[RMDB]
RNA sequence: GGGAACGACUCGAGUAGAGUCGAAAAGCGUUCUUGCCAGCGUAGUUCGGACGGGUCAGGUCGUUCAGAAAGCUCAUGCGAUUCUCUCUCUUUUGGAUGUGAGUUUAAGGCCGGAGUAGGGCAGGGUCGUUAGAUACCCUGCGCCAUACCUGCCUUACCAAGGCAGGGAAUUCGUUCCCUGCCUUGGAAAAGAAACAACAACAACAAC
Reactivity to 2A3 in 0.01 (KOAc 150mM, MgCl2 10mM, bicine 150mM(pH8.5), 24C), signal-to-noise 2, nucleotides 027 to 156: g030c020g000u030u020c050u080u140g040c050c000a000g000c020g060u070a040g190u040u070c040g040g020a070c060g060g010g030u050c020a010g000g050u030c000g020u020u020c050a040g090a070a050a000g000c000u000c050a060u060g010c010g080a090u130u020c030u010c000u000c000u000c040u050u070u080u130g080g080a070u150g040u000g070a170g020u040u060u120a020a010g000g000c060c080g010g000a080g050u220a150g020g020g000c000a010g010g030g000u030c050g130u100u150a010g000a050u070a030c000c000c030u000g000c040g040c000c000a050u050a030c000c000u000g010c000c010u000u000a020
Reactivity to DMS in 0.01 (KOAc 150mM, MgCl2 10mM, bicine 150mM(pH8.5), 24C), signal-to-noise 1, nucleotides 027 to 156: g000c010g030u000u000c020u010u000g030c020c000a040g050c010g000u010a110g020u000u000c060g020g040a070c060g000g030g040u000c050a100g000g000u000c060g000u000u000c040a120g030a090a080a080g020c030u010c020a050u010g020c030g010a110u010u000c050u000c050u020c040u010c040u010u000u000u000g030g000a070u000g010u050g010a080g000u000u000u010a050a010g050g020c030c050g030g030a290g080u000a060g000g010g010c000a060g000g050g050u000c070g010u000u010a240g020a270u010a010c010c000c000u000g000c040g000c010c010a070u010a090c020c020u000g000c010c000u000u010a060
Structure probing data (2A3 and DMS) for a 207-nucleotide construct. The 2A3 profile rests on 917 reads. For DMS the reverse transcriptase was MarathonRT. The data come from the RNA Mapping Database (RMDB), library OK3TST. The RNA was probed in 150 mM KOAc, 10 mM MgCl2 and 150 mM bicine (pH 8.5) at 24 C.